Chemical mapping of a 207-nucleotide RNA with 2A3. The reactions ran in a buffer of 150 mM KOAc, 10 mM MgCl2 and 150 mM bicine (pH 8.5), at 24 C. Reactivities are given for positions 27 through 156. It was measured as part of the RMDB library M2RFPK.
RNA sequence: GGGAACGACUCGAGUAGAGUCGAAAAUACCGCAGGCCUGCGGUGCGGCAGUGUGGAGACCUGCCGUAAGCCGUGUUGUUUAGACAACCGGGAGAAAGCGUAUGCGGAGGCAGCGCUUUCAGGGUCUAAAAGUAUGGGAUCUUCGGAUCCCAUACAAGAUCUCUCAGGAGUUCGCUCCUGAGAGAUCAAAAGAAACAACAACAACAAC
Reactivity to 2A3 in 0.01 (KOAc 150mM, MgCl2 10mM, bicine 150mM(pH8.5), 24C), signal-to-noise 2, nucleotides 027 to 156: u120a020c010c000g000c000a000g000g000c000c000u010g010c000g020g020u000g030c000g020g000c000a020g020u050g000u080g290g110a050g060a110c000c000u000g000c000c000g000u000a010a000g050c000c020g120u140g020u100u010g020u030u040u220a190g010a070c000a030a000c000c000g020g010g000a010g000a000a000a000g000c000g000u020a280u230g010c050g020g090a060g230g090c020a000g020c000g000c000u000u000u010c010a000g030g000g000u020c000u000a060a040a010a070g000u010a000u000g000g000g010a000u000c010u030u070c220g010g000a000u000c010c010c010a000u000a000c000a000a010